[RMDB]
RNA sequence: GGGAACGACUCGAGUAGAGUCGAAAAUUAUUCGUGUAUGUUCACGUUUUUUGCGAAUCGCGGCGACGUAUCCAGUCGCAUCCGUAGCGCGGUAUGUGCUGUGAAAGAAGUAGCUGCCUCGUGCGCGCACCUCUUCCACGUUCGCGUGGAAGAGGUGAAAAGAAACAACAACAACAAC
Reactivity to 2A3 in 0.01 (KOAc 150mM, MgCl2 10mM, bicine 150mM(pH8.5), 24C), signal-to-noise 2, nucleotides 027 to 126: u080u100a050u050u060c000g000u010g020u020a110u300g300u130u140c020a000c050g000u020u000u000u000u210u270g040c050g010a050a020u110c060g000c020g000g010c000g000a000c020g050u030a090u070c050c000a020g080u120c020g070c000a000u000c000c020g050u040a110g070c070g040c040g110g060u210a000u070g000u020g000c020u000g090u090g130a100a080a130g170a040a030g070u010a050g030c040u030g050c000c000u060c050g090u100g000c060g020c000g000
Reactivity to DMS in 0.01 (KOAc 150mM, MgCl2 10mM, bicine 150mM(pH8.5), 24C), signal-to-noise 2, nucleotides 027 to 126: u010u000a050u010u000c020g010u000g020u010a070u030g020u010u010c000a050c070g020u000u010u010u000u010u000g020c040g000a100a100u010c180g010c050g020g010c010g020a050c050g010u000a130u010c040c040a040g000u000c070g010c020a020u000c030c040g000u010a120g020c220g010c020g000g010u000a000u000g030u000g000c000u000g000u000g010a050a070a130g010a130a150g000u000a070g010c040u020g010c020c080u000c060g000u010g000c140g020c090g010

This 177-nucleotide RNA was probed chemically with 2A3 and DMS.
DMS adducts were read by reverse transcription with MarathonRT.
The 2A3 profile rests on 1,222 reads.
The reactions ran in a buffer of 150 mM KOAc, 10 mM MgCl2 and 150 mM bicine (pH 8.5), at 24 C.